RNA sequence: GGGAACGACUCGAGUAGAGUCGAAAAGAUAUGGAAUAUGACAGCAACAGCUUCUGGUCGGAAACGACCAGGAAGACAUGCUGGAGUAUUCCUAAGUCAAAAUCAGUUUAUGUUCGCAUAAACUGAAGUUCAAUCUAUACUUCGGUAUAGAUUGAACAAAAGAAACAACAACAACAAC
Reactivity to DMS in 0.01 (KOAc 150mM, MgCl2 10mM, bicine 150mM(pH8.5), 24C), signal-to-noise 4, nucleotides 027 to 126: g000a020u000a140u000g000g000a020a010u000a010u010g000a300c000a010g020c000a110a100c260a130g020c010u000u000c000u000g010g010u000c010g020g000a040a040a070c000g010a010c010c000a010g010g010a000a030g010a060c090a200u020g010c000u000g000g000a300g000u000a010u000u000c000c000u000a010a080g010u000c010a120a120a120a150u000c000a010g010u000u000u000a010u010g000u010u000c290g020c020a000u000a010a010a010c000u000g000a030a060
Reactivity to 2A3 in 0.01 (KOAc 150mM, MgCl2 10mM, bicine 150mM(pH8.5), 24C), signal-to-noise 4, nucleotides 027 to 126: g010a010u030a010u070g010g000a000a000u000a010u050g040a030c000a010g000c090a160a100c050a300g000c040u000u000c000u010g000g000u000c000g000g020a020a010a010c000g000a010c000c030a010g030g020a000a000g000a000c130a220u300g000c010u000g010g020a000g010u000a000u010u000c000c000u000a020a000g010u000c010a010a020a030a300u040c000a010g000u010u000u010a010u020g050u030u100c300g000c150a000u000a010a010a010c010u000g010a050a020

The record gives the reactivity of an RNA of 177 nucleotides to DMS and 2A3. For 2A3 the reverse transcriptase was SuperScript II with manganese. For 2A3, 14,015 sequencing reads were counted. For DMS the reverse transcriptase was MarathonRT. Source: RMDB library TTRDES, as collected in RNAgym. Reactivities are rounded to 0.1 and cut off at 0 and 3. High 2A3 reactivity points to a flexible backbone, as in loops and unpaired stretches. The reactions ran in a buffer of 150 mM KOAc, 10 mM MgCl2 and 150 mM bicine (pH 8.5), at 24 C.